This 177-nucleotide RNA was probed chemically with DMS and 2A3.
[RMDB]
RNA sequence: GGGAACGACUCGAGUAGAGUCGAAAAUGGAUCACCCGGCGCGAGCCGCCAUUGCUGGCCCGGCAUGAAACAUGCAGCCGCCCGAUGCCCGUCGCGCGAAAGGCCAGAUCAAUCAGGGCAUGAGCGACAUAGCGUAAUGGUUCGCCAUUACGCUAUGAAAAGAAACAACAACAACAAC
Reactivity to DMS in 0.01 (KOAc 150mM, MgCl2 10mM, bicine 150mM(pH8.5), 24C), signal-to-noise 9, nucleotides 027 to 126: u010g000g010a110u000c060a120c130c130c020g010g010c040g020c120g000a130g010c040c030g020c040c080a040u000u000g010c030u010g010g000c010c020c080g010g010c030a040u000g000a120a110a110c110a050u000g000c030a180g010c110c030g010c010c020c010g000a050u000g010c020c020c020g000u000c030g020c240g020c030g000a060a060a110g010g000c000c020a050g010a080u010c080a050a070u010c150a110g010g000g010c030a080u010g000a120g010c060g010a210
Reactivity to 2A3 in 0.01 (KOAc 150mM, MgCl2 10mM, bicine 150mM(pH8.5), 24C), signal-to-noise 4, nucleotides 027 to 126: u060g040g010a040u060c030a050c040c030c000g030g000c020g000c010g040a040g050c050c010g010c030c010a040u020u070g010c020u010g020g000c010c020c020g020g010c020a040u080g070a170a260a050c060a040u070g020c020a010g070c030c010g000c020c010c010g020a010u040g000c000c000c010g020u040c020g000c000g000c000g070a120a040a010g030g000c020c000a010g010a060u110c030a040a040u080c040a080g000g000g040c040a040u080g060a040g060c010g030a030

The RNA was probed in 150 mM KOAc, 10 mM MgCl2 and 150 mM bicine (pH 8.5) at 24 C. The DMS profile rests on 15,246 reads.